[RMDB]
RNA sequence: GGGAACGACUCGAGUAGAGUCGAAAAUUGACUGUGUAUGCCUCGACGUAAAGAGAUUCCGCGAACAUUGAACCCAUCCAACAGUUCCAGCCUGUAACGGGUUACGGCAGUAGGUCAUCGCCAACUUGACUAGAAUUUUACUCGCAUGACCUUGGAACGUAUGUGGCCAAUUCGUUGGCCACAUACGAAAAGAAACAACAACAACAAC
Reactivity to 2A3 in 0.01 (KOAc 150mM, MgCl2 10mM, bicine 150mM(pH8.5), 24C), signal-to-noise 1, nucleotides 027 to 156: u180u080g000a010c040u050g000u000g010u120a060u080g000c000c010u030c010g050a080c070g080u170a060a120a000g040a000g000a080u080u060c020c080g070c000g020a030a030c030a030u060u060g000a030a050c010c030c000a070u060c000c000a010a000c010a050g000u120u050c030c060a000g000c000c010u030g000u020a060a030c090g000g120g000u050u030a010c030g010g000c000a030g020u050a000g000g010u000c000a000u020c030g000c000c000a200a150c220u140u020g140a190c010u040a060g080a050a060u030u030u080u210a070c060u020c020g060c030a020u030g050a010c050c000u000u010g000g000a000a040

An RNA of 207 nucleotides, treated with 2A3 and read out base by base. For 2A3 the reverse transcriptase was SuperScript II with manganese.